The data come from the RNA Mapping Database (RMDB), library 15KLIB.
This 170-nucleotide RNA was probed chemically with DMS and 2A3.
High 2A3 reactivity points to a flexible backbone, as in loops and unpaired stretches.
For 2A3, 18,607 sequencing reads were counted.
[RMDB]
RNA sequence: GGGAACGACUCGAGUAGAGUCGAAAAUGCUAAUUUCAAUGUAUUGUUUGCUAUGACCAUGCCUAAGACUUGUUUCGGACCCAUAGUCCGAAAGAUCUUUGUUGAUGGCGUGCCAUUUGUAGUAUCUAAGCGUACCAGUUCGCUGGUACGAAAAGAAACAACAACAACAAC
Reactivity to DMS in 0.01 (KOAc 150mM, MgCl2 10mM, bicine 150mM(pH8.5), 24C), signal-to-noise 6, nucleotides 027 to 129: u020g000c050u000a050a090u030u040u060c170a150a090u060g000u030a090u000u000g030u000u040u030g030c060u010a050u030g010a090c300c020a040u000g030c020c030u030a140a280g020a030c060u030u030g010u030u020u020c020g020g030a040c020c140c290a140u040a150g000u030c010c000g020a000a000a000g050a160u040c090u030u020u030g020u000u000g020a230u030g000g000c040g000u020g030c150c050a090u030u020u050g000u020a050g030u030a070u030c030u040a090a100g020
Reactivity to 2A3 in 0.01 (KOAc 150mM, MgCl2 10mM, bicine 150mM(pH8.5), 24C), signal-to-noise 9, nucleotides 027 to 129: u120g000c040u120a090a110u150u170u210c170a140a100u170g070u110a070u120u140g110u090u090u070g010c010u010a020u050g010a010c050c010a010u030g020c020c010u050a090a040g010a010c000u080u150g040u060u030u000c000g020g000a010c030c030c100a190u210a070g000u000c000c000g010a000a000a000g030a020u040c040u040u160u200g020u000u040g040a050u170g010g010c010g010u000g000c000c040a140u110u080u090g060u020a040g020u000a050u050c060u060a070a030g080